[RMDB]
RNA sequence: GGGAACGACUCGAGUAGAGUCGAAAAUAUGUGAUUUGGUGUGCGUACAUCAGGUCGCACAACUUUCUCUAUGUCGCCACAUAGUGGAAGUGAACUCAGUGCUGUACGCACAGUUCUGAGUGACCUUUGCUACUGUAGCGACAGUGGUAAAGAAGUAGCGUACGAAAAUAUUCGUAUUUUCGUACGCAAAAGAAACAACAACAACAAC
Reactivity to DMS in 0.01 (KOAc 150mM, MgCl2 10mM, bicine 150mM(pH8.5), 24C), signal-to-noise 2, nucleotides 027 to 156: u000a000u000g020u000g010a010u010u000u010g000g050u010g000u000g020c300g020u020a040c010a030u000c040a040g020g000u010c010g000c000a010c030a070a070c090u000u000u000c010u000c030u000a080u010g020u000c000g000c130c080a170c000a040u000a030g000u000g000g010a010a010g020u020g000a220a050c020u000c010a030g030u000g010c000u010g000u000a140c300g020c220a100c000a020g040u000u000c020u030g020a000g020u000g000a210c300c000u000u020u000g010c030u000a010c050u000g050u000a120g050c040g010a100c000a000g010u000g050g000u000a030a040a070g010a070a070g000u000a200
Reactivity to 2A3 in 0.01 (KOAc 150mM, MgCl2 10mM, bicine 150mM(pH8.5), 24C), signal-to-noise 2, nucleotides 027 to 156: u290a030u040g020u010g000a010u020u020u030g040g010u010g000u050g130c230g070u200a020c000a010u010c000a010g030g000u010c010g020c010a020c030a040a120c020u030u110u020c020u000c010u040a090u070g020u000c010g000c010c000a000c000a000u010a000g020u040g190g030a020a010g010u050g090a000a000c000u000c000a010g000u000g000c000u010g010u040a070c120g040c120a020c030a000g000u020u000c000u000g010a010g010u030g030a090c010c000u010u000u000g000c000u010a060c200u020g010u010a010g010c010g030a010c000a010g000u050g030g000u120a090a070a060g060a070a020g060u080a020
The record gives the reactivity of an RNA of 207 nucleotides to DMS and 2A3.
DMS adducts were read by reverse transcription with MarathonRT.
For DMS, 3,223 sequencing reads were counted.
For 2A3, 5,429 sequencing reads were counted.